[RMDB]
Structure probing data (DMS and 2A3) for a 177-nucleotide construct. The data come from the RNA Mapping Database (RMDB), library OK2TST.

RNA sequence: GGGAACGACUCGAGUAGAGUCGAAAACUGGGGUGUUCCUACUGUGCUUGUUACCGGCUUCAGGAAUCAAAUGCACUAGAGAAUUGUAGAAGUGCGGUCCACAUCCUCUGUGUGGUAGGACCAGCUGAUUUGAUCAUGCAUUCGUGCAUGAUCAAAUAAAAGAAACAACAACAACAAC
Reactivity to DMS in 0.01 (KOAc 150mM, MgCl2 10mM, bicine 150mM(pH8.5), 24C), signal-to-noise 5, nucleotides 027 to 126: c030u000g010g010g000g020u000g010u000u000c020c000u000a090c100u010g010u000g010c030u000u000g010u000u010a120c050c030g010g010c110u010u010c050a110g020g000a080a080u010c080a030a060a100u010g010c030a040c050u010a090g000a120g000a070a080u010u010g010u010a080g000a070a030g000u000g030c050g010g000u000c040c030a050c060a060u000c050c070u000c130u010g020u000g030u000g010g000u000a060g010g000a050c020c010a110g010c050u010g010
Reactivity to 2A3 in 0.01 (KOAc 150mM, MgCl2 10mM, bicine 150mM(pH8.5), 24C), signal-to-noise 3, nucleotides 027 to 126: c020u030g000g010g010g040u020g020u030u020c000c000u020a060c020u060g010u020g040c000u050u040g020u100u110a100c030c000g080g000c020u050u050c060a070g000g150a040a040u070c030a020a040a090u200g000c050a020c090u100a020g020a010g020a220a210u200u120g070u150a060g000a140a000g030u050g120c070g030g000u000c030c000a040c000a080u090c000c040u070c090u070g130u030g020u010g120g040u090a130g030g040a000c000c000a000g020c030u040g040